[RMDB]
RNA sequence: GGGAACGACUCGAGUAGAGUCGAAAAGGUCCUAAUUCACCCACGCACAACUCUUAUUGUCUUUUUAGCAGCGCUCAAGGCUCUGGGACUUAUUAUUUAAACACUCUUACCACUUAUAGUGCUGGUGCCCUAGCCAAUAUUUCGAUAUUGGCUAGGGAAAAGAAACAACAACAACAAC
Reactivity to 2A3 in 0.01 (KOAc 150mM, MgCl2 10mM, bicine 150mM(pH8.5), 24C), signal-to-noise 2, nucleotides 027 to 126: g070g030u000c000c010u030a030a020u170u090c020a050c030c010c020a000c070g060c010a040c010a080a110c060u070c060u150u130a060u120u140g070u130c030u000u130u090u050u130a050g060c020a030g000c030g000c070u060c050a070a060g060g000c000u000c050u100g020g000g010a000c000u040u040a010u050u010a050u020u220u060a080a070a050c020a000c050u060c040u040u080a020c000c000a070c090u090u080a110u120a250g040u060g020c020u020g060g030u030g020
Reactivity to DMS in 0.01 (KOAc 150mM, MgCl2 10mM, bicine 150mM(pH8.5), 24C), signal-to-noise 2, nucleotides 027 to 126: g000g000u010c000c020u000a070a180u010u010c100a040c050c070c010a050c140g000c040a070c040a090a070c120u010c050u010u000a050u000u000g000u000c000u020u010u020u000u010a110g030c050a080g010c050g000c020u010c130a040a100g000g020c040u000c040u000g000g000g000a080c060u000u010a060u000u000a080u010u000u000a090a100a120c110a060c090u010c060u000u000a060c080c040a060c070u000u000a130u000a060g030u020g010c030u000g020g000u020g000
Structure probing data (2A3 and DMS) for a 177-nucleotide construct. The RNA was probed in 150 mM KOAc, 10 mM MgCl2 and 150 mM bicine (pH 8.5) at 24 C.